[RMDB]
RNA sequence: GGGAACGACUCGAGUAGAGUCGAAAACGUGCCUUCAUGCUAAGGGUUUGAUAUCUGCUAAAACCCGGUGCAUUCAUCAAUGCAGGUUAAGCCAAAGGGAUGUCCCGACGGGAGGCCGACAAUCCAGAUAGCUCAAGAAUGUUCGCAUUCUUGAGAAUGUUUAUUGGUUCUUCGGAACCAAUAAACAAAAAGAAACAACAACAACAAC
Reactivity to 2A3 in 0.01 (KOAc 150mM, MgCl2 10mM, bicine 150mM(pH8.5), 24C), signal-to-noise 2, nucleotides 027 to 156: c010g060u100g020c000c010u030u010c020a070u080g030c040u070a040a110g040g010g010u050u020u010g010a010u030a040u070c060u080g030c030u090a070a000a040a020c010c010c010g040g030u080g000c000a050u040u120c040a080u060c070a120a110u080g030c000a020g090g000u070u070a070a060g070c060c030a070a050a040g120g010g010a030u080g050u070c000c020c000g020a010c020g020g000g000a020g030g000c020c000g020a070c040a000a070u010c020c010a040g030a190u160a060g000c000u000c000a000a000g000a000a000u010g010u080u040c110g000c090a000u000u000c000u000u000g000a010g030a010a010
Reactivity to DMS in 0.01 (KOAc 150mM, MgCl2 10mM, bicine 150mM(pH8.5), 24C), signal-to-noise 3, nucleotides 027 to 156: c050g000u010g000c000c000u000u000c010a150u010g040c010u020a250a190g010g010g040u000u000u000g010a130u000a080u000c050u010g020c080u050a110a060a020a040c020c020c030g010g110u000g020c020a070u010u000c060a020u020c070a120a250u010g020c010a040g010g000u000u000a090a090g030c020c030a090a090a120g010g010g010a140u000g010u000c040c010c020g000a100c040g020g000g010a050g050g050c000c010g010a080c040a080a130u000c010c030a240g010a210u000a090g000c010u000c000a000a010g000a030a010u000g000u000u000c300g030c000a010u000u000c010u000u000g020a010g010a020a040
The data come from the RNA Mapping Database (RMDB), library M2RFPK. The record gives the reactivity of an RNA of 207 nucleotides to 2A3 and DMS. High 2A3 reactivity points to a flexible backbone, as in loops and unpaired stretches. Reactivities are rounded to 0.1 and cut off at 0 and 3. Reactivities are given for positions 27 through 156.